[RMDB]
Structure probing data (DMS and 2A3) for a 177-nucleotide construct. It was measured as part of the RMDB libraries RFM100 and RFMREP. 2A3 adducts were read by reverse transcription with SuperScript II with manganese.

RNA sequence: GGGAACGACUCGAGUAGAGUCGAAAACGUCAUCGUGUGUUUGCCUUCGGGGUCUAUGGCGCCGCUGAAAAGUUGCGUCCUCUGGGCUCUUGGUAUUCUACUGGGUGGCAAGGGCUGACCGGCAAGGCAAAUUCAACUAGUUCGCUAGUUGAAUUUGAAAAGAAACAACAACAACAAC
Reactivity to DMS in 0.01 (KOAc 150mM, MgCl2 10mM, bicine 150mM(pH8.5), 24C), signal-to-noise 7, nucleotides 027 to 126: c120g010u000c050a040u010c050g010u000g010u010g010u010u010u010g010c010c010u010u020c150g010g000g000g010u000c010u000a020u040g000g000c010g010c000c080g000c010u000g000a110a080a120a010g020u000u000g010c010g010u000c000c010u000c020u000g000g000g000c000u000c010u000u010g010g010u000a020u010u000c030u020a070c060u010g010g010g020u000g000g000c020a080a070g000g010g000c010u010g000a070c020c010g020g020c070a070a070g010g010
Reactivity to 2A3 in 0.01 (KOAc 150mM, MgCl2 10mM, bicine 150mM(pH8.5), 24C), signal-to-noise 9, nucleotides 027 to 126: c050g030u020c010a040u030c030g050u030g010u010g000u080u030u030g010c010c000u080u150c130g000g000g010g010u000c010u030a040u280g010g000c000g000c000c020g000c010u010g040a050a040a010a020g010u010u010g000c000g010u000c000c000u000c000u000g010g000g000c000u010c000u000u020g000g000u020a030u010u030c040u070a090c030u100g130g000g030u020g010g000c040a090a080g100g010g000c040u040g030a060c010c020g020g020c060a040a040g090g000